[RMDB]
Conditions: 150 mM KOAc, 10 mM MgCl2 and 150 mM bicine (pH 8.5), 24 C. This 207-nucleotide RNA was probed chemically with DMS and 2A3. For DMS, 4,677 sequencing reads were counted. It was measured as part of the RMDB library M2RFPK. 2A3 adducts were read by reverse transcription with SuperScript II with manganese.

RNA sequence: GGGAACGACUCGAGUAGAGUCGAAAAGAAUCACCGUACCUAUCUAGGUUUACGCUCCAAGAUCGGUGGAUAGCAGCCCUAUCAAUAUCUAGGAGAACUGUGCUAUGUUUAGAAGAUUAGGUAGUCUAUUACACAGCCAUGUUCGCAUGGCUGUGAAUCGAACAAAAUGGUUCGCCAUUUUGUUCGAAAAAGAAACAACAACAACAAC
Reactivity to DMS in 0.01 (KOAc 150mM, MgCl2 10mM, bicine 150mM(pH8.5), 24C), signal-to-noise 3, nucleotides 027 to 156: g030a140a090u010c040a210c020c010g010u020a050c040c010u010a110u010c110u010a040g000g010u000u000u010a060c110g020c000u010c020c010a100a100g020a010u010c110g010g030u000g020g010a090u010a100g020c060a250g000c130c060c000u000a180u000c030a100a110u000a100u000c050u010a140g010g010a070g020a070a110c040u010g010u000g000c040u010a040u010g010u000u000u000a090g010a080a100g010a100u010u000a040g020g020u010a090g020u020c030u000a120u000u000a200c000a010c000a020g010c000c000a030u000g000u000u010c300g010c010a020u000g000g000c020u030g020u000g000a030a080
Reactivity to 2A3 in 0.01 (KOAc 150mM, MgCl2 10mM, bicine 150mM(pH8.5), 24C), signal-to-noise 3, nucleotides 027 to 156: g050a050a080u110c030a010c060c010g020u040a020c000c000u040a060u250c050u080a040g050g040u020u090u070a050c050g000c030u000c000c000a040a000g010a050u050c030g030g100u030g050g050a030u030a000g070c060a010g010c020c000c010u020a040u080c050a060a040u070a020u150c040u010a020g010g020a030g020a040a070c030u070g000u030g050c000u050a030u160g100u040u100u030a150g010a150a030g000a110u160u050a030g010g020u010a030g050u020c030u050a070u060u100a080c000a000c000a000g030c010c000a010u010g010u050u030c090g000c070a000u000g000g000c000u000g000u000g000a000a000